[RMDB]
RNA sequence: GGGAACGACUCGAGUAGAGUCGAAAAUAGGCGAACGAGAGGCCCUCUCGUGUGCGGAGUUGUCACGCUGACAUAAUUGUUAUGAUGUCCGAUUCCGGUAGCAUCGCGGCGAUGAUUUCAUAGGACAUCUUAUGAACCCAAGGGCUUCGGGGAAGCAAGUAUAUGAUGAUUUCGAUCAUCAUAUACUAAAAGAAACAACAACAACAAC
Reactivity to DMS in 0.01 (KOAc 150mM, MgCl2 10mM, bicine 150mM(pH8.5), 24C), signal-to-noise 4, nucleotides 027 to 156: u000a090g010g010c030g010a070a070c040g000a060g020a060g030g000c030c020c070u000c010u000c040g030u000g020u000g020c010g030g020a160g030u000u010g010u000c030a080c050g010c060u010g010a070c060a070u000a080a130u000u010g010u000u010a080u010g010a060u000g010u010c000c010g000a230u000u010c070c020g030g030u010a080g000c040a040u000c030g020c070g040g020c070g010a100u010g010a100u000u000u000c040a080u000a110g020g010a080c070a060u000c020u000u000a060u000g000a070a070c060c010c020a020a050g010g020g000c030u000u000c030g010g010g020g010a080a100g010c060a100
Reactivity to 2A3 in 0.01 (KOAc 150mM, MgCl2 10mM, bicine 150mM(pH8.5), 24C), signal-to-noise 5, nucleotides 027 to 156: u160a030g060g020c030g020a030a010c020g010a020g010a030g090g030c010c030c000u010c000u000c010g040u070g040u070g050c050g020g040a040g020u060u030g030u060c030a010c100g030c070u050g030a020c010a040u170a110a080u160u090g070u090u100a080u140g020a000u000g020u000c010c000g040a110u160u050c070c020g040g030u050a050g040c020a020u020c050g000c060g120g040c060g050a050u050g040a030u060u130u110c070a060u090a060g030g010a020c020a030u010c000u010u050a080u050g020a020a040c010c020c030a020a030g000g000g000c000u040u070c050g020g000g000g000a020a020g040c060a050